[RMDB]
Structure probing data (DMS and 2A3) for a 207-nucleotide construct.
RNA sequence: GGGAACGACUCGAGUAGAGUCGAAAAUCAUCAUAUGCUUCAAUAGUGGAAUUUCUUGAGGUAACGGAUAUUAUGGUUGUAAUAGUCCAUUUUCGCACUGCUAUGAAGAUACUACCCAGGACUGGGUAAUUUUAAACAGAGGAGAUUUAAUUGACUAAUUACUGGAUCAGUUCGCUGAUCCAGUAAUAAAAGAAACAACAACAACAAC
Reactivity to DMS in 0.01 (KOAc 150mM, MgCl2 10mM, bicine 150mM(pH8.5), 24C), signal-to-noise 1, nucleotides 027 to 156: u000c040a100u000c070a150u030a100u000g000c020u000u000c050a040a100u010a060g080u020g030g030a100a180u000u000u000c080u030u000g030a040g000g010u000a030a100c110g010g030a070u000a040u010u000a080u010g000g030u000u020g000u000a040a080u000a020g070u010c000c070a140u030u000u000u000c030g010c050a150c050u010g030c000u010a070u000g010a030a060g010a190u010a030c060u010a030c010c000c000a110g000g010a110c180u010g000g030g040u010a020a010u000u000u000u000a050a060a110c040a070g000a150g020g000a160g020a090u000u000u000a030a180u010u000g000a040c050u000a090
Reactivity to 2A3 in 0.01 (KOAc 150mM, MgCl2 10mM, bicine 150mM(pH8.5), 24C), signal-to-noise 2, nucleotides 027 to 156: u070c020a000u000c010a020u250a020u200g050c020u000u040c020a030a170u040a130g050u020g110g130a210a160u080u210u070c020u060u100g010a020g120g010u090a060a000c050g040g020a010u000a000u300u030a090u070g080g040u060u050g010u020a070a060u020a090g090u000c010c010a030u040u060u020u040c020g000c020a010c010u030g000c000u020a010u080g010a010a000g020a000u020a090c050u020a020c050c000c000a040g020g210a200c250u020g000g000g000u010a000a080u010u030u060u150a040a040a000c030a010g130a050g030g000a030g020a090u030u160u260a040a100u090u090g010a010c010u020a120

Background
DMS adducts were read by reverse transcription with MarathonRT. The DMS profile rests on 1,813 reads. In probing experiments dimethyl sulfate is read out at A N1 and C N3, which are open when not base-paired. The 2A3 profile rests on 625 reads.